Chemical mapping of a 207-nucleotide RNA with 2A3. The 2A3 profile rests on 566 reads. Reactivities are given for positions 27 through 156.

RNA sequence: GGGAACGACUCGAGUAGAGUCGAAAAGAAAGAAAGUACUGAAAGUAUUGUGGGAAAUAAUGUGUAAAUCAUUGACCGUUCCUGCGCUGGUAAGUAUAAAAUUUUAGUCCAGACACCACCAGUAUAACCAAUCUAGUGACCUUCGGGUCACUAGAAACGAUUCAGUCUGGUUCGCCAGACUGAAUCGAAAAGAAACAACAACAACAAC
Reactivity to 2A3 in 0.01 (KOAc 150mM, MgCl2 10mM, bicine 150mM(pH8.5), 24C), signal-to-noise 1, nucleotides 027 to 156: g030a010a120a010g120a060a110a000g030u010a010c020u020g050a030a060a100g080u120a140u250u140g000u030g020g020g060a000a000a040u050a000a000u080g030u010g010u030a000a070a000u070c000a000u000u040g020a030c000c030g000u080u050c040c010u020g020c010g040c000u000g000g000u010a050a050g090u040a050u300a120a140a070a130u100u150u030u070a030g020u020c000c000a000g010a010c000a040c030c000a000c000c000a010g050u000a050u010a150a040c050c020a020a070u000c000u010a000g000u000g000a000c000c000u020u080c210g040g010g030u000c000a000c000u010a000g000a010a000a000